RNA sequence: GGGAACGACUCGAGUAGAGUCGAAAAUUUUGGGCAGAUAACAACUGUAACGCGUCUUGCCACUGUAUUGUAAACACUACAACAAAUUUUAAGUUUAAUACACCUACGCGACAAGAUGAAUCGGAAACUAAUUCCACUGAUUCGUCAGUGGAAUUAGAAAAGAAACAACAACAACAAC
Reactivity to 2A3 in 0.01 (KOAc 150mM, MgCl2 10mM, bicine 150mM(pH8.5), 24C), signal-to-noise 3, nucleotides 027 to 126: u080u080u040u100g030g020g010c010a030g030a050u090a130a070c040a050a060c040u040g040u070a060a030c030g030c010g070u000c020u050u040g000c000c020a010c060u020g020u030a030u050u030g040u080a030a040a020c030a000c060u190a020c050a200a000c060a090a220a140u140u220u140u230a150a010g000u000u020u050a050a020u040a020c010a000c020c050u050a030c060g030c050g050a050c020a020a010g030a070u070g030a070a060u050c030g040g010a000a120a000
Reactivity to DMS in 0.01 (KOAc 150mM, MgCl2 10mM, bicine 150mM(pH8.5), 24C), signal-to-noise 4, nucleotides 027 to 126: u000u000u000u010g000g020g030c020a010g010a090u000a060a110c180a140a130c060u010g000u010a090a100c100g010c040g000u000c010u000u010g010c010c030a110c080u000g020u000a010u000u010g000u010a020a050a060c090a060c050u000a030c160a060a100c140a040a090a180u010u000u000u000a060a070g000u000u000u000a040a090u000a020c050a060c150c080u000a030c080g000c030g000a020c050a020a040g010a040u000g010a040a100u010c080g000g000a080a060a140